[RMDB]
RNA sequence: GGGAACGACUCGAGUAGAGUCGAAAACUGAUACGUCCUCUAUCAGAGGACAAUAUAUUAAAUGGAUUUUUGGAAUUAGGAGUUGGAAUAGGAGCUUGCUCCGUCCACUCCACGCAUCGACCUGGUACAACAAUAACAAGUUCGCUUGUUAUUGUUGAAAAGAAACAACAACAACAAC
Reactivity to 2A3 in 0.01 (KOAc 150mM, MgCl2 10mM, bicine 150mM(pH8.5), 24C), signal-to-noise 8, nucleotides 027 to 126: c020u030g030a050u050a160c080g000u000c010c000u000c010u060a220u260c120a050g000a000g000g010a000c000a000a000u030a000u010a010u010u290a060a100a140u110g050g040a070u070u090u090u120u190g110g030a100a060u100u040a220g010g000a010g020u120u120g090g010a070a080u100a300g000g000a010g000c030u080u090g010c000u050c010c000g000u000c000c000a000c000u000c000c000a010c000g040c010a040u060c030g070a090c010c010u030g040g010u090a050
Reactivity to DMS in 0.01 (KOAc 150mM, MgCl2 10mM, bicine 150mM(pH8.5), 24C), signal-to-noise 7, nucleotides 027 to 126: c050u000g000a090u000a080c230g010u000c000c000u000c010u000a130u010c270a100g020a020g010g010a010c010a020a020u000a070u010a070u000u010a050a080a110u010g000g010a110u000u000u000u010u000g010g010a090a090u010u000a110g000g010a020g000u000u000g020g000a030a040u010a120g020g000a010g010c020u000u000g020c010u000c000c000g000u000c000c000a020c020u000c000c000a050c190g010c090a040u000c050g010a070c030c020u000g000g010u000a180

Conditions: 150 mM KOAc, 10 mM MgCl2 and 150 mM bicine (pH 8.5), 24 C. This 177-nucleotide RNA was probed chemically with 2A3 and DMS. For 2A3 the reverse transcriptase was SuperScript II with manganese. For 2A3, 10,324 sequencing reads were counted. DMS adducts were read by reverse transcription with MarathonRT. Source: RMDB library RFMREP, as collected in RNAgym. Reactivities are rounded to 0.1 and cut off at 0 and 3.